[RMDB]
Background: Structure probing data (DMS) for a 177-nucleotide construct. High DMS reactivity at an A or C suggests that its Watson-Crick edge is free. The reactions ran in a buffer of 150 mM KOAc, 10 mM MgCl2 and 150 mM bicine (pH 8.5), at 24 C. Values cover nucleotides 27 to 126.

RNA sequence: GGGAACGACUCGAGUAGAGUCGAAAAGGUUAUCCGGCGGUCGACGCACGGUCAUGCACCCCCGAUCCGUCGCCCCCUCCACCCCGCGGAUUCCGGUCUCGACCGGUAGCCGUAUUGGGCGGGGACGCAACUUAUGAAGCUUCGGCUUCAUAAGUUGAAAAGAAACAACAACAACAAC
Reactivity to DMS in 0.01 (KOAc 150mM, MgCl2 10mM, bicine 150mM(pH8.5), 24C), signal-to-noise 1, nucleotides 027 to 126: g010g020u000u000a020u000c120c030g030g000c030g000g010u020c130g010a130c100g000c100a090c110g010g000u040c080a080u000g010c090a190c010c000c010c050c020g010a050u000c010c060g040u000c010g000c030c010c000c010c000u000c000c050a050c020c070c000c090g030c020g000g000a200u000u000c000c000g000g000u000c070u030c300g000a040c000c000g000g050u010a040g000c040c000g010u000a090u010u020g020g040g000c040g010g000g000g020a040c140g000